About this RNA: Chemical mapping of a 177-nucleotide RNA with 2A3 and DMS. The reactions ran in a buffer of 150 mM KOAc, 10 mM MgCl2 and 150 mM bicine (pH 8.5), at 24 C. The 2A3 profile rests on 1,316 reads. It was measured as part of the RMDB library OK1LIB. Values cover nucleotides 27 to 126. The DMS profile rests on 3,568 reads.

RNA sequence: GGGAACGACUCGAGUAGAGUCGAAAAAUUGAUGUUUAUUUAUUCGAAGCAUUAAAUAACCAGAUAAUCAUUGCUAUACCAGAUUGGUUUUGGUCAUAUCAGAUGGCAAUGACAUUAGAUGAAGAAAUCUAAGAGGGACUUUCGAGUCCCUCUUAGAAAAAGAAACAACAACAACAAC
Reactivity to 2A3 in 0.01 (KOAc 150mM, MgCl2 10mM, bicine 150mM(pH8.5), 24C), signal-to-noise 3, nucleotides 027 to 126: a000u050u080g010a030u020g010u060u050u050a130u060u290u020a170u080u230c180g070a060a030g010c010a000u000u060a080a070a050u040a020a050c030c010a000g030a090u100a140a000u050c000a000u000u000g000c010u020a030u040a280c070c040a060g020a050u060u100g010g160u030u130u050u260g250g040u070c050a010u020a070u150c040a020g000a100u030g000g000c010a000a010u010g000a000c030a040u140u200a060g100a230u130g010a010a060g130a040a030a010
Reactivity to DMS in 0.01 (KOAc 150mM, MgCl2 10mM, bicine 150mM(pH8.5), 24C), signal-to-noise 2, nucleotides 027 to 126: a160u010u010g010a020u000g010u000u000u020a040u050u040u030a060u000u020c070g020a160a060g000c040a030u020u000a020a020a040u020a020a130c040c000a100g010a100u030a150a160u000c010a000u000u010g000c000u000a010u000a100c080c060a100g000a030u000u020g010g010u030u000u040u040g010g000u010c030a060u030a020u000c040a070g000a030u000g000g000c000a000a000u000g000a030c170a120u000u010a040g030a090u030g020a120a110g000a050a150a100